[RMDB]
RNA sequence: GGGAACGACUCGAGUAGAGUCGAAAAAAGAGCAAGAUCAAAUAGGCGUUACAGAACUUAUCAAGUUCCCGGGUUAUCUCUAGCCGGCUUGUAAUGCGGGUAGAUCGCUUGAGGUAAACGGUAACGAGUGCCAUAAAAUGUUCGCAUUUUAUGGCACAAAAGAAACAACAACAACAAC
Reactivity to DMS in 0.01 (KOAc 150mM, MgCl2 10mM, bicine 150mM(pH8.5), 24C), signal-to-noise 1, nucleotides 027 to 126: a030a050g010a060g020c040a090a050g000a030u000c080a050a110a070u000a060g030g000c020g040u000u000a050c070a070g000a060a090c060u000u000a060u000c150a090a160g010u000u000c020c140c000g000g010g000u010u000a010u000c020u000c080u000a040g020c010c010g000g040c060u020u000g040u000a010a040u010g030c040g000g000g000u010a040g010a040u010c090g010c020u000u010g000a060g020g000u000a020a030a100c030g010g000u010a010a020c040g010a190
Reactivity to 2A3 in 0.01 (KOAc 150mM, MgCl2 10mM, bicine 150mM(pH8.5), 24C), signal-to-noise 2, nucleotides 027 to 126: a000a000g080a010g000c040a070a010g020a120u100c020a000a080a130u150a100g130g000c010g010u020u010a010c030a030g010a050a020c020u060u090a100u300c050a050a030g010u020u000c000c000c020g100g000g000u020u010a040u030c050u050c000u060a030g070c050c030g070g000c050u100u070g100u200a050a070u140g070c090g000g040g060u080a050g010a090u130c030g020c050u020u020g000a000g010g010u040a080a000a090c030g000g000u030a000a030c030g070a070